Source: RMDB library OK2TRN, as collected in RNAgym. This 177-nucleotide RNA was probed chemically with DMS. The DMS profile rests on 973 reads. The RNA was probed in 150 mM KOAc, 10 mM MgCl2 and 150 mM bicine (pH 8.5) at 24 C. For DMS the reverse transcriptase was MarathonRT.
[RMDB]
RNA sequence: GGGAACGACUCGAGUAGAGUCGAAAAGAACAGCGCGCCGGCGCCGCUGUCGCCGCCGCCCGCCGCCGGCGCGGGAAGCACCAGGGCGGCGUCGCUGCGCAGCAGCCGCCAGCCCAGAUAGGCCAGAAUGAAAAUUUAGGUUCGCCUAAAUUUUCAUAAAAGAAACAACAACAACAAC
Reactivity to DMS in 0.01 (KOAc 150mM, MgCl2 10mM, bicine 150mM(pH8.5), 24C), signal-to-noise 1, nucleotides 027 to 126: g000a190a070c050a240g000c020g000c000g040c060c030g040g000c040g000c120c080g050c080u000g020u000c140g000c070c040g030c060c100g040c040c080c030g030c130c010g030c060c050g050g000c040g050c000g010g010g010a070a180g010c040a070c070c050a130g020g000g040c000g010g020c010g000u000c070g030c020u000g000c050g040c160a120g030c040a070g050c020c020g010c010c000a090g040c020c010c000a090g010a110u000a080g000g010c060c060a130g020a230